[RMDB]
RNA sequence: GGGAACGACUCGAGUAGAGUCGAAAACGGGAAAUAGCUGGAUGACAGCCAAUCUAGGUGUACACGGGUAUAUCAGUGCAGAUAAUCCCUUCACAAAAAUGACUUUAACUAUAAAUGAUGUCAGAAAUGUAAUUGGACCAAUAUAUGCUAUGGGAUAAACCAUAACGUGAUUCGUCACGUUAUGGUUAAAAGAAACAACAACAACAAC
Reactivity to 2A3 in 0.01 (KOAc 150mM, MgCl2 10mM, bicine 150mM(pH8.5), 24C), signal-to-noise 5, nucleotides 027 to 156: c020g000g000g060a050a100a060u080a050g030c030u020g060g030a080u090g030a060c040a010g010c020c000a030a000u040c040u120a060g000g070u090g010u080a050c070a040c110g020g040g030u050a070u010a000u120c040a030g090u040g110c030a010g010a050u040a050a090u050c000c000c000u030u080c060a050c010a010a100a040a000a050u040g040a010c010u090u100u070a110a040c060u050a050u090a270a080a090u150g040a020u050g020u010c000a000g080a040a110a010u100g010u160a050a050u040u070g020g000a010c020c020a080a010u070a010u010a010u190g010c040u040a050u110g020g050g070a060u160a140
Reactivity to DMS in 0.01 (KOAc 150mM, MgCl2 10mM, bicine 150mM(pH8.5), 24C), signal-to-noise 3, nucleotides 027 to 156: c050g020g010g000a070a050a110u000a080g020c010u010g020g020a190u000g020a200c020a080g010c010c020a040a110u010c050u000a100g020g020u010g060u000a040c030a110c110g000g040g000u000a070u000a080u000c030a080g010u000g000c020a050g030a140u000a090a130u000c010c000c030u000u010c040a070c050a040a050a100a150a200u000g000a060c020u000u000u000a090a150c040u000a150u000a060a120a160u000g000a100u010g010u010c040a070g000a030a070a110u000g010u000a020a070u000u000g020g030a070c020c020a030a130u000a070u000a050u000g010c030u000a090u000g000g000g010a100u000a080
An RNA of 207 nucleotides, treated with 2A3 and DMS and read out base by base. Reactivities are given for positions 27 through 156. Reactivities are rounded to 0.1 and cut off at 0 and 3. DMS (dimethyl sulfate) methylates the pairing face of unpaired adenines and cytosines. The RNA was probed in 150 mM KOAc, 10 mM MgCl2 and 150 mM bicine (pH 8.5) at 24 C. The data come from the RNA Mapping Database (RMDB), library OK3TST.